Record summary
Chemical mapping of a 207-nucleotide RNA with DMS and 2A3. The reactions ran in a buffer of 150 mM KOAc, 10 mM MgCl2 and 150 mM bicine (pH 8.5), at 24 C. The 2A3 profile rests on 923 reads.

[RMDB]
RNA sequence: GGGAACGACUCGAGUAGAGUCGAAAAGGAACCGGAUGUCAUCACGUUGUUGCAGUACCAGAUGGCAUCUUAAAUCCGAUCUGCAAAUAAGCAUGUAGAAAGCUGAUGCGGGCUUUAGCUGGACGGGGGAAUACAGGCAACUUCGGUUGCCUGUAAACUUGUAAUAGUCUUUCGAGACUAUUACAAGAAAAGAAACAACAACAACAAC
Reactivity to DMS in 0.01 (KOAc 150mM, MgCl2 10mM, bicine 150mM(pH8.5), 24C), signal-to-noise 2, nucleotides 027 to 156: g040g010a100a110c100c090g040g000a010u000g020u000c000a020u000c030a280c150g030u000u000g020u000u000g000c010a110g020u000a060c050c080a160g020a040u000g000g010c010a010u000c000u000u000a040a100a130u010c020c010g000a110u000c000u000g000c010a020a080a110u010a070a100g010c030a150u000g020u000a100g010a080a090a140g020c010u010g010a090u000g000c050g000g010g020c080u010u010u000a080g020c050u010g000g010a060c030g000g000g010g040g020a100a190u010a030c000a000g000g000c010a010a010c010u000u010c300g040g010u000u000g030c000c010u000g000u000a000a060a100
Reactivity to 2A3 in 0.01 (KOAc 150mM, MgCl2 10mM, bicine 150mM(pH8.5), 24C), signal-to-noise 1, nucleotides 027 to 156: g050g010a110a050c040c040g000g000a000u020g040u030c020a000u000c030a020c150g030u060u070g050u030u040g020c080a050g080u060a090c030c030a050g010a010u000g000g010c000a000u010c000u000u020a030a020a010u010c010c000g000a080u000c000u000g040c000a020a030a140u200a110a030g060c020a020u130g000u120a060g130a220a170a050g050c020u070g020a060u060g060c050g000g040g020c000u170u090u120a050g020c050u090g010g010a040c010g010g000g000g000g030a010a010u070a020c010a000g000g000c000a000a030c040u030u030c140g030g010u000u000g000c020c000u000g000u010a010a000a000